[RMDB]
An RNA of 177 nucleotides, treated with DMS and 2A3 and read out base by base.
For DMS, 884 sequencing reads were counted.
It was measured as part of the RMDB library M2PK50.
For 2A3, 2,590 sequencing reads were counted.
2A3 adducts were read by reverse transcription with SuperScript II with manganese.
RNA sequence: GGGAACGACUCGAGUAGAGUCGAAAAGUGACACUGUUCGCAGUGUCACAAAGUGGUGGAUCUAGUACCACAAUAACUAGAUCAAAGAUCUAGUCUAGAUCAAAAGCAUACAGUUCGCUGUAUGCAACAGUCAUCAUGUCUUCGGACAUGAUGACUGAAAAGAAACAACAACAACAAC
Reactivity to DMS in 0.01 (KOAc 150mM, MgCl2 10mM, bicine 150mM(pH8.5), 24C), signal-to-noise 1, nucleotides 027 to 126: g010u010g000a010c010a020c000u010g000u000u020c240g000c010a020g010u000g000u000c020a030c020a040a080a100g010u000g000g030u000g010g000a010u010c020u000a010g000u010a050c010c020a020c030a030a130u000a020a060c000u000a000g000a050u000c010a150a200a190g020a040u000c000u000a000g000u000c010u000a010g000a020u020c180a090a050a180a070g000c000a000u000a040c000a000g010u000u000c130g000c010u000g020u050a000u000g000c000a040a030
Reactivity to 2A3 in 0.01 (KOAc 150mM, MgCl2 10mM, bicine 150mM(pH8.5), 24C), signal-to-noise 2, nucleotides 027 to 126: g010u000g020a000c010a000c010u020g020u050u100c120g000c070a000g020u010g000u010c000a000c000a020a010a000g020u010g010g000u000g000g020a030u000c010u020a000g040u060a040c000c000a010c040a040a060u140a020a010c000u000a000g020a000u000c040a130a300a020g030a010u000c000u000a020g030u020c010u030a020g030a020u020c050a030a040a020a000g010c010a000u000a000c000a000g030u040u060c190g070c080u000g000u010a010u000g010c000a010a010